RNA sequence: GGGAACGACUCGAGUAGAGUCGAAAACGGCAAAAAAGCAAACUUGACCACCAAGGAUAAAAGAGAUCUUAUCCAAGGAUGCAAAAGAUAAUCUCACUUUUGACACCCACUGAGCUCGAACUUAAAGAAAACCGAGACUACUUCGGUAGUCUCGGAACAAUUGUCCUAUCUUCGGAUAGGACAAUUGAAAAGAAACAACAACAACAAC
Reactivity to DMS in 0.01 (KOAc 150mM, MgCl2 10mM, bicine 150mM(pH8.5), 24C), signal-to-noise 2, nucleotides 027 to 156: c030g020g010c020a000a100a050a050a030a010g020c030a090a050a110c010u000u010g010a290c170c000a100c030c010a020a300g000g020a090u000a010a010a040a040g010a280g030a170u010c030u010u000a030u000c020c000a100a300g000g000a020u010g020c000a030a080a020a050g010a100u000a040a030u000c060u000c070a090c030u000u000u000u000g000a090c000a070c010c000c010a190c070u000g000a040g000c020u000c070g030a070a070c060u010u020a050a050a120g000a070a040a060a120c020c000g000a000g000a020c000u000a000c000u000u010c270g040g010u000a010g000u000c000u000c000g000g000a000a040
Reactivity to 2A3 in 0.01 (KOAc 150mM, MgCl2 10mM, bicine 150mM(pH8.5), 24C), signal-to-noise 5, nucleotides 027 to 156: c010g050g000c050a030a020a030a050a050a020g080c070a120a090a060c060u050u040g040a110c020c020a020c010c010a050a030g020g000a020u030a040a060a040a010g150a030g010a040u050c030u050u040a020u000c020c010a030a040g040g010a030u050g000c000a020a040a030a020g030a060u120a170a170u130c030u020c060a040c030u010u030u010u060g050a050c010a050c000c000c000a030c060u080g030a010g040c020u030c100g050a120a060c060u110u140a170a110a030g090a050a120a030a010c010c000g000a010g000a000c000u000a000c000u020u040c120g060g000u000a000g000u000c000u000c000g000g010a000a000